[RMDB]
RNA sequence: GGGAACGACUCGAGUAGAGUCGAAAAGAUAUGGAACUCUAUGAAGAUGGCUGCGCUGGUGGGAUACUUAACUUUCUUCGGAAACGAAGAAAGUUAAGGAGCAGACCAUUGGAGAGUUCCUAAGUCAUCGAAUAGAUAUCUUCGGAUAUCUAUUCGAAAAAGAAACAACAACAACAAC
Reactivity to DMS in 0.01 (KOAc 150mM, MgCl2 10mM, bicine 150mM(pH8.5), 24C), signal-to-noise 3, nucleotides 027 to 126: g000a020u010a170u000g000g000a020a000c000u000c010u000a150u020g020a250a300g000a010u000g000g000c020u000g020c010g020c220u000g010g000u000g000g020g010a250u020a240c010u000u010a000a000c010u000u000u000c000u010u000c000g000g000a040a040a050c010g020a030a000g000a000a000a010g000u000u000a000a000g000g000a100g010c000a010g010a180c010c000a010u000u000g000g010a020g000a060g010u000u000c010c000u000a010a050g010u010c020a180
Reactivity to 2A3 in 0.01 (KOAc 150mM, MgCl2 10mM, bicine 150mM(pH8.5), 24C), signal-to-noise 3, nucleotides 027 to 126: g010a020u030a000u070g000g010a020a010c000u000c000u020a300u300g160a150a150g030a030u010g010g020c000u010g010c040g040c150u220g070g170u160g090g040g030a060u110a210c010u000u000a020a000c000u010u010u000c000u010u020c010g010g000a020a000a000c000g010a000a000g000a000a010a010g000u000u000a000a000g000g010a010g000c010a000g190a300c000c000a000u010u020g000g050a000g000a000g010u000u000c000c010u020a010a000g010u000c000a090